[RMDB]
RNA sequence: GGGAACGACUCGAGUAGAGUCGAAAAGGGGUCGCACACCUUCGCUGUAAGAGGCUUGGAUUUAUGGAGCUGAAGCCUCCACGGCUCCAUUGUCAGCCUUAUCAGCGAACGUGUGCGACGGAGGCACCCAAAACUCUGCCGGUUCGCCGGCAGAGAAGCAAUUACCCUCCUUCGGGAGGGUAAUUGCAAAAGAAACAACAACAACAAC
Reactivity to 2A3 in 0.01 (KOAc 150mM, MgCl2 10mM, bicine 150mM(pH8.5), 24C), signal-to-noise 2, nucleotides 027 to 156: g130g000g020g010u000c000g010c010a010c000a000c000c030u000u000c000g130c000u000g040u210a300a110g050a050g130g000c100u190u290g150g020a040u150u300u130a030u060g010g000a010g000c000u040g020a100a030g020c000c040u060c020c030a000c000g000g000c000u000c000c000a000u000u000g040u020c020a010g010c040c000u020u010a060u050c020a000g000c010g000a000a000c000g010u000g010u000g000c000g000a000c000g000g000a000g000g020c030a060c050c000c020a010a060a090a060c000u000c010u010g000c010c000g010g030u120u130c180g060c090c000g000g250c040a020g000a000g040a300a010
Chemical mapping of a 207-nucleotide RNA with 2A3.
It was measured as part of the RMDB library RNAMAK.
2A3 adducts were read by reverse transcription with SuperScript II with manganese.